[RMDB]
RNA sequence: GGGAACGACUCGAGUAGAGUCGAAAAGUUGAUAACGAAACACCGUCCUGCUCAGCGAUAACGUCCUGCAUGCCUGGCGUAUGCUCAUCGUAAACUGCGUGGUCAGAUAGUUGACGAGCUCACGCUUUGAUACACUAAGGUUCGCCUUAGUGUAUCAAAAAGAAACAACAACAACAAC
Reactivity to DMS in 0.01 (KOAc 150mM, MgCl2 10mM, bicine 150mM(pH8.5), 24C), signal-to-noise 3, nucleotides 027 to 126: g010u000u000g020a130u020a070a080c060g010a120a090a080c100a060c060c050g010u000c000c010u010g020c030u010c040a100g020c060g000a040u000a060a110c070g010u000c020c020u000g020c060a050u000g000c030c030u010g010g010c030g000u000a040u010g000c010u000c030a060u000c030g010u010a040a070a080c050u000g010c030g020u000g020g000u010c020a050g000a090u000a100g010u010u000g010a060c060g000a050g030c040u000c110a050c040g010c070u000u000
Reactivity to 2A3 in 0.01 (KOAc 150mM, MgCl2 10mM, bicine 150mM(pH8.5), 24C), signal-to-noise 3, nucleotides 027 to 126: g040u040u050g080a160u100a240a000c050g070a120a040a000c050a010c020c050g010u030c010c000u030g000c010u020c060a040g020c000g050a020u040a130a070c040g050u020c000c020u020g020c010a050u110g020c000c010u020g030g000c020g000u050a030u090g000c000u010c020a070u060c020g090u070a060a080a050c030u050g020c050g120u130g070g060u060c000a000g040a130u120a060g130u060u110g040a020c020g010a020g000c000u060c030a010c000g000c000u000u010